Source: RMDB library M2PK90, as collected in RNAgym. An RNA of 177 nucleotides, treated with DMS and 2A3 and read out base by base. The RNA was probed in 150 mM KOAc, 10 mM MgCl2 and 150 mM bicine (pH 8.5) at 24 C.
[RMDB]
RNA sequence: GGGAACGACUCGAGUAGAGUCGAAAAUAAAAGGACAACGAAAUGCGCCUCUGCAACCUCCAGCUGGUGUUGUCUGGGAACCUGAUCAAAACUACCGAGUUUGAACAGGCCAAUGCAGAGAAAAAAACCCAAUAUGUACGUUCGCGUACAUAUUGGGAAAAGAAACAACAACAACAAC
Reactivity to DMS in 0.01 (KOAc 150mM, MgCl2 10mM, bicine 150mM(pH8.5), 24C), signal-to-noise 1, nucleotides 027 to 126: u020a020a060a090a050g000g000a050c010a040a030c040g010a080a120a100u010g020c100g030c090c000u000c010u000g000c000a060a120c090c030u010c050c070a100g020c110u020g030g020u000g000u000u000g010u030c000u000g010g020g000a120a270c030c000u000g020a050u000c000a010a030a020a030c000u010a160c250c160g000a060g000u010u000u000g010a010a030c020a000g000g000c030c060a080a070u000g000c000a000g000a070g030a000a010a060a040a050a090a130
Reactivity to 2A3 in 0.01 (KOAc 150mM, MgCl2 10mM, bicine 150mM(pH8.5), 24C), signal-to-noise 1, nucleotides 027 to 126: u070a000a050a000a010g050g010a040c020a020a000c040g070a100a140a120u140g040c010g060c040c010u000c000u010g010c000a070a040c020c000u000c010c010a050g020c050u110g000g110u060g040u180u020g000u010c030u020g000g000g060a020a030c000c000u000g000a020u050c010a000a110a050a080c000u090a140c070c210g150a070g110u010u020u000g000a010a030c010a000g020g000c090c020a000a000u020g000c000a010g000a000g000a090a020a020a000a000a010a040
Values cover nucleotides 27 to 126.
2A3 adducts were read by reverse transcription with SuperScript II with manganese.
The 2A3 profile rests on 1,142 reads.
The DMS profile rests on 901 reads.
For DMS the reverse transcriptase was MarathonRT.